[RMDB]
RNA sequence: GGGAACGACUCGAGUAGAGUCGAAAAAGGUACUCGUGUUUCUGUCAUAUGUACAAUCCCUUCUGAGACGGAAACAUGAGUACGAGUACUGUUAGUAGAAGGGAUUGUAACUGCUAGGAGUACGAGUACAAGAUACGUACACAAUGUAUCUUGUACACACAUCGAUCGACUUCGGUCGAUCGAUGUGAAAAGAAACAACAACAACAAC
Reactivity to DMS in 0.01 (KOAc 150mM, MgCl2 10mM, bicine 150mM(pH8.5), 24C), signal-to-noise 1, nucleotides 027 to 156: a120g010g030u000a000c000u010c010g020u000g020u000u010u000c000u020g030u030c040a230u020a140u000g010u010a050c000a040a060u000c010c000c010u000u000c060u000g000a160g020a010c010g040g010a030a040a110c020a000u020g000a140g050u000a010c020g010a110g000u000a100c050u030g010u010u030a140g000u000a020g000a030a040g000g030g010a080u000u000g010u000a040a150c110u010g000c040u000a130g000g000a160g050u000a060c080g000a150g020u000a020c000a010a020g000a010u000a020c000g070u000a160c300a090c300a060a090u000g000u010a010u000c000u010u000g020u010a010c010a240
Reactivity to 2A3 in 0.01 (KOAc 150mM, MgCl2 10mM, bicine 150mM(pH8.5), 24C), signal-to-noise 3, nucleotides 027 to 156: a000g080g010u010a000c000u000c010g010u000g020u010u010u000c020u010g050u010c020a060u080a110u300g080u030a040c010a020a010u060c010c030c000u040u040c090u100g180a130g000a000c000g000g000a010a060a000c000a000u070g090a030g040u090a010c010g010a010g000u030a000c010u030g080u300u120a070g030u080a050g050a040a050g060g010g000a030u000u040g020u010a010a060c020u060g020c050u050a020g030g070a050g100u080a070c030g020a020g000u010a010c020a000a010g000a000u000a010c000g070u060a080c110a040c060a130a150u170g000u000a000u000c000u000u010g010u000a000c020a010

The record gives the reactivity of an RNA of 207 nucleotides to DMS and 2A3. The RNA was probed in 150 mM KOAc, 10 mM MgCl2 and 150 mM bicine (pH 8.5) at 24 C. Reactivities are given for positions 27 through 156. DMS adducts were read by reverse transcription with MarathonRT.